[RMDB]
RNA sequence: GGGAACGACUCGAGUAGAGUCGAAAAAAAUCGCAUAGCAAAGAGUCAAAAAAAUAGAGAGCUUUGCGAGACCUACCAAGGGUGAAGAGAUACCAUCCAAGGAGCUGAAGACAAAUCUCACUUUAGAAACGGAAGCGGUGCUUCGGCACCGCUUCAACAGCAAUAUUAUCUUCGGAUAAUAUUGCUGAAAAGAAACAACAACAACAAC
Reactivity to 2A3 in 0.01 (KOAc 150mM, MgCl2 10mM, bicine 150mM(pH8.5), 24C), signal-to-noise 1, nucleotides 027 to 156: a000a000a010u000c000g000c000a010u000a030g050c050a000a140a220g120a110g110u230c120a170a210a110a090a000a070a000u300a090g060a010g000a000g010c010u020u010u000g000c010g000a000g010a060c000c000u020a140c020c030a050a070g000g000g000u000g010a090a000g070a030g020a090u080a170c050c000a010u030c020c000a030a030g000g040a010g020c160u210g080a000a050g000a080c010a050a080a030u030c050u020c010a070c080u090u240u100a100g060a160a080a020c150g070g000a080a000g000c050g040g000u000g000c020u070u070c180g050g010c000a000c020c000g000c000u000u000c020a000a000
Chemical mapping of a 207-nucleotide RNA with 2A3. Values are in units of 0.01, from 0 to 300, in steps of 10. Reactivities are given for positions 27 through 156. The reactions ran in a buffer of 150 mM KOAc, 10 mM MgCl2 and 150 mM bicine (pH 8.5), at 24 C. The 2A3 profile rests on 436 reads.